[RMDB]
RNA sequence: GGGAACGACUCGAGUAGAGUCGAAAAUUCUACGAUUUCUUAACAGCUUCGAAGAAAGACACGUUGAAGAAGACGAAGAUAUCAGGGUUUUUCAUCAAGGAGAUAGGAUCAUUGAUGCUGGCGAAGAAAUUUGGAUAACUUUCGAGUUAUCCAAAUUAAAAGAAACAACAACAACAAC
Reactivity to DMS in 0.01 (KOAc 150mM, MgCl2 10mM, bicine 150mM(pH8.5), 24C), signal-to-noise 9, nucleotides 027 to 126: u010u010c020u000a090c100g010a120u010u000u000c000u000u010a080a080c090a110g010c030u000u000c030g010a100a090g010a070a060a060g010a080c130a110c080g000u010u010g010a070a060g000a070a060g000a060c090g000a110a060g010a080u030a050u030c070a080g000g000g010u010u010u010u010u010c040a050u010c040a040a040g010g010a070g000a090u020a090g010g000a240u010c030a050u010u010g000a030u010g000c030u000g000g000c080g010a050a070g010a050
Reactivity to 2A3 in 0.01 (KOAc 150mM, MgCl2 10mM, bicine 150mM(pH8.5), 24C), signal-to-noise 9, nucleotides 027 to 126: u050u000c010u040a080c050g080a130u030u030u020c020u040u060a100a050c020a050g020c010u040u030c050g120a120a070g080a110a120a030g070a060c070a030c170g080u040u060g060a100a070g030a040a010g030a040c020g030a040a030g050a080u060a030u090c030a040g000g010g040u030u040u030u050u060c060a080u020c030a030a050g080g000a110g090a050u090a060g070g040a050u040c010a040u030u080g010a000u030g020c040u020g040g030c040g030a020a020g050a050